[RMDB]
RNA sequence: GGGAACGACUCGAGUAGAGUCGAAAAAAUUUUAUUUUUGCGACGAAGUUACCAUGCAAUUGUGUAACGGAAAACACGGAUAUUUCAUCAAAGCUCACUGGUCGGAGAUGUCGAAACACAAUCAAAUCAUGGCGGACUGCAUUGUGCGCUACAACAAGUACGUAUCAUAUUUCGAUAUGAUACGUACAAAAGAAACAACAACAACAAC
Reactivity to DMS in 0.01 (KOAc 150mM, MgCl2 10mM, bicine 150mM(pH8.5), 24C), signal-to-noise 3, nucleotides 027 to 156: a060a070u030u000u000u000a110u040u020u000u000u000g020c030g020a160c020g030a120a140g010u000u000a050c020c020a070u000g040c150a120a100u000u000g020u020g020u000a110a170c060g010g000a080a080a110a060c040a110c060g000g010a120u000a040u000u010u000c060a180u000c050a090a080a160g030c030u000c070a080c050u010g040g020u000c050g030g030a120g010a050u000g010u000c000g060a090a080a040c020a020c020a040a050u000c050a080a080a130u000c030a060u000g030g020c020g010g000a080c030u010g030c040a120u000u010g000u010g010c090g000c040u000a130c090a030a050c110a030a160
Reactivity to 2A3 in 0.01 (KOAc 150mM, MgCl2 10mM, bicine 150mM(pH8.5), 24C), signal-to-noise 2, nucleotides 027 to 156: a010a010u170u130u060u050a130u040u090u010u090u060g020c010g030a010c010g040a080a020g010u000u010a030c000c020a020u030g050c100a130a200u060u030g030u010g000u070a040a000c000g000g020a080a090a020a020c090a040c040g010g030a030u060a110u130u110u090c040a060u030c020a060a060a010g020c020u010c030a070c070u070g030g040u070c030g030g010a050g000a050u060g020u040c050g030a080a100a010c040a000c000a030a080u080c040a040a050a130u100c030a040u080g010g000c020g030g030a030c010u030g020c070a080u080u100g000u040g050c010g000c000u040a030c020a140a010c000a110a050